[RMDB]
Description:
Chemical mapping of a 207-nucleotide RNA with DMS and 2A3. For DMS the reverse transcriptase was MarathonRT. Conditions: 150 mM KOAc, 10 mM MgCl2 and 150 mM bicine (pH 8.5), 24 C. It was measured as part of the RMDB library OK3TST.

RNA sequence: GGGAACGACUCGAGUAGAGUCGAAAAAUAGAACCGAGGAAUAUACUGAUUAGAAAUAAACGUCUUUCACUAAUUGACUAUUCUAGAACUAACAAACUAUACAAGAGUGAAAACUCACAUAUAGAUUACAACGAGGACAUGAUAACUUCAGGAAAUAAAAUACGAAAGGAUUCGUCCUUUCGUAUUUAAAAGAAACAACAACAACAAC
Reactivity to DMS in 0.01 (KOAc 150mM, MgCl2 10mM, bicine 150mM(pH8.5), 24C), signal-to-noise 1, nucleotides 027 to 156: a210u000a000g010a090a300c000c030g000a290g020g020a050a070u000a070u010a070c020u000g000a000u000u000a070g040a090a100a170u000a090a030a130c100g030u000c010u020u000u000c040a100c030u000a020a060u000u010g000a150c020u000a110u000u000c000u000a120g010a080a100c050u000a050a080c040a110a040a080c040u000a090u000a050c040a140a110g000a000g000u000g000a200a050a050a050c000u000c040a050c080a020u000a000u000a020g000a160u020u020a050c080a130a030c120g000a070g020g010a060c080a070u000g020a050u000a070a040c110u000u010c060a050g000g010a060a090a140u000a030
Reactivity to 2A3 in 0.01 (KOAc 150mM, MgCl2 10mM, bicine 150mM(pH8.5), 24C), signal-to-noise 1, nucleotides 027 to 156: a000u060a030g040a100a030c110c090g030a060g000g050a050a030u040a000u000a050c120u170g070a090u100u110a060g000a050a170a020u180a000a110a010c040g040u000c020u040u140u100c020a000c080u130a100a100u000u040g010a140c010u060a000u040u020c030u010a000g040a070a060c000u030a030a020c030a120a030a020c030u000a000u070a110c010a060a020g000a000g010u030g130a010a020a020a000c000u040c000a030c000a000u040a000u010a000g050a020u070u050a020c030a050a000c020g000a010g020g000a010c000a150u150g000a010u010a070a040c010u060u060c070a020g080g090a050a140a030u100a070